[RMDB]
RNA sequence: GGGAACGACUCGAGUAGAGUCGAAAAAAUGGCCCACCAAGCCGAAGACGGGUAGCGGGUGUGAGAGCACGACCCGCGACAUCGGGACUGAGACACUGCCCGGACUCCUACGGGAGGCUGCAGCAACAGUGCAAUAUGCAUUCGUGCAUAUUGCACUAAAAGAAACAACAACAACAAC
Reactivity to DMS in 0.01 (KOAc 150mM, MgCl2 10mM, bicine 150mM(pH8.5), 24C), signal-to-noise 4, nucleotides 027 to 126: a060a050u000g010g000c010c000c040a230c110c080a130a190g000c010c000g010a070a050g000a150c090g000g010g000u020a090g030c030g020g000g030u000g020u020g030a170g000a160g020c040a040c000g000a060c010c000c000g000c020g000a040c170a070u000c030g020g000g000a090c050u020g020a130g000a050c120a160c060u010g000c020c070c020g000g000a080c010u000c000c000u020a140c110g010g000g000a050g000g010c030u000g000c070a080g000c090a080a110c110
Reactivity to 2A3 in 0.01 (KOAc 150mM, MgCl2 10mM, bicine 150mM(pH8.5), 24C), signal-to-noise 5, nucleotides 027 to 126: a000a000u150g100g010c010c000c010a020c010c010a020a010g010c000c030g030a020a010g080a040c050g020g010g030u040a030g030c010g010g000g000u020g000u040g030a300g030a020g150c020a010c050g130a070c010c010c010g010c010g010a000c000a070u040c000g010g000g040a040c030u050g050a020g010a080c050a010c080u030g010c000c020c000g030g000a040c020u010c000c000u040a080c200g040g000g000a010g000g020c020u060g010c030a050g000c010a010a070c000